The record gives the reactivity of an RNA of 207 nucleotides to 2A3 and DMS. 2A3 adducts were read by reverse transcription with SuperScript II with manganese. The DMS profile rests on 6,779 reads. The reactions ran in a buffer of 150 mM KOAc, 10 mM MgCl2 and 150 mM bicine (pH 8.5), at 24 C. The 2A3 profile rests on 3,359 reads. For DMS the reverse transcriptase was MarathonRT.
RNA sequence: GGGAACGACUCGAGUAGAGUCGAAAAUGACGAUGUCCGCCGAGGUUGUCGAGCCUGCCGAGUCGGGCGGCUACGGUGAGAUCGAAGUCGAACAGUCCGGGCCGGAUUCGUCGCCGCACCUGCAUCUCAAGAUCCCUGGCUUGCAGGGUCCGCCGGGGAACCUAAACCUAUUCGUAGGUUUAGGUUCAAAAGAAACAACAACAACAAC
Reactivity to 2A3 in 0.01 (KOAc 150mM, MgCl2 10mM, bicine 150mM(pH8.5), 24C), signal-to-noise 3, nucleotides 027 to 156: u180g010a020c020g030a030u100g040u080c000c010g000c010c010g020a060g020g000u040u040g010u040c030g020a050g020c010c010u060g020c040c110g150a060g070u250c030g030g040g000c040g000g000c000u060a060c040g040g000u050g010a090g000a050u120c040g050a060a000g030u010c020g010a030a020c010a010g020u000c010c000g000g030g000c110c030g000g010a010u030u030c010g010u000c010g020c030c000g060c000a060c020c010u010g000c010a100u040c050u010c090a040a030g030a100u100c000c000c020u040g010g010c030u020u110g000c020a010g020g000g010u100c060c080g000c010c010g000g000g010
Reactivity to DMS in 0.01 (KOAc 150mM, MgCl2 10mM, bicine 150mM(pH8.5), 24C), signal-to-noise 2, nucleotides 027 to 156: u010g000a040c020g020a060u000g010u000c020c020g000c010c010g010a090g040g030u010u010g000u000c020g020a070g010c010c010u000g040c040c050g000a170g030u000c040g030g010g010c000g010g020c010u000a060c020g030g030u010g000a180g030a100u000c020g030a100a150g000u000c010g000a080a120c030a050g010u010c000c000g010g010g010c030c030g060g020a300u000u010c050g000u000c000g040c060c030g050c090a080c020c010u000g000c010a060u010c020u000c030a050a080g000a140u000c000c000c000u000g000g020c020u010u000g020c030a040g000g000g000u000c030c050g010c020c010g000g010g010